[RMDB]
RNA sequence: GGGAACGACUCGAGUAGAGUCGAAAACUAGGGCCCUUAAGGGUGAUGCUAAAUCUACUCUGCCUGUGCUCUAUAAGUGGAACAACAAAGCCUGGAUCACAACACAGCUGUUUAUAGCAUAGUUUAAGCCCACUAUUGACACCUACUGCCCAGAAAAGGUUACAUGAGGGUUCGCCCUCAUGUAACCAAAAGAAACAACAACAACAAC
Reactivity to 2A3 in 0.01 (KOAc 150mM, MgCl2 10mM, bicine 150mM(pH8.5), 24C), signal-to-noise 2, nucleotides 027 to 156: c060u050a060g000g000g020c000c020c000u040u150a090a140g020g000g000u010g010a020u040g000c100u120a100a120a240u010c050u100a020c030u030c040u050g040c010c020u030g070u070g020c040u030c000u040a100u050a180a000g060u050g050g020a060a020c050a010a000c020a090a270a020g070c010c050u020g020g020a050u130c060a030c020a170a060c070a030c030a070g030c030u030g090u170u120u210a100u150a050g040c010a030u030a090g000u070u130u060a110a030g030c000c000c000a020c010u010a070u150u230g030a030c000a020c000c000u050a020c000u090g080c000c000c040a030g150a010a130a020a020
The record gives the reactivity of an RNA of 207 nucleotides to 2A3. Conditions: 150 mM KOAc, 10 mM MgCl2 and 150 mM bicine (pH 8.5), 24 C. For 2A3, 774 sequencing reads were counted.